An RNA of 177 nucleotides, treated with DMS and 2A3 and read out base by base. For DMS, 1,314 sequencing reads were counted. Conditions: 150 mM KOAc, 10 mM MgCl2 and 150 mM bicine (pH 8.5), 24 C.
[RMDB]
RNA sequence: GGGAACGACUCGAGUAGAGUCGAAAACGGAGGCAGUGUGUCGCACGGCAACGGCAACAGUCUGCUGCCUUUCCCUGGAGCCGGUCCGGCGGGGAGCUCUGGAGUGUUGCCGGGAAUCGUGGGAGGGCCUCGGUGCUACUUUCGAGUAGCACCGAGGAAAAGAAACAACAACAACAAC
Reactivity to DMS in 0.01 (KOAc 150mM, MgCl2 10mM, bicine 150mM(pH8.5), 24C), signal-to-noise 2, nucleotides 027 to 126: c020g000g000a090g000g020c000a050g000u100g020u010g020u040c120g000c000a080c010g000g020c010a140a300c000g000g010c030a090a000c000a010g000u000c030u020g000c250u000g020c160c010u000u000u000c010c000c000u040g020g000a170g080c080c170g020g000u010c000c100g090g030c290g010g020g000g020a010g000c020u020c240u040g000g020a060g020u000g000u020u000g000c010c010g030g030g000a050a300u000c010g020u000g000g000g000a180g010g010g020
Reactivity to 2A3 in 0.01 (KOAc 150mM, MgCl2 10mM, bicine 150mM(pH8.5), 24C), signal-to-noise 2, nucleotides 027 to 126: c090g060g020a060g000g000c040a050g050u060g030u070g030u130c020g040c100a070c020g020g010c000a060a040c000g000g000c010a020a000c000a030g120u000c000u020g040c040u010g020c020c000u050u020u030c010c000c000u020g060g060a050g090c130c040g040g060u110c050c080g020g010c110g020g030g000g000a010g000c010u060c110u140g080g000a100g070u030g000u020u030g000c010c020g000g000g000a030a030u020c020g000u030g010g140g040a140g010g050g000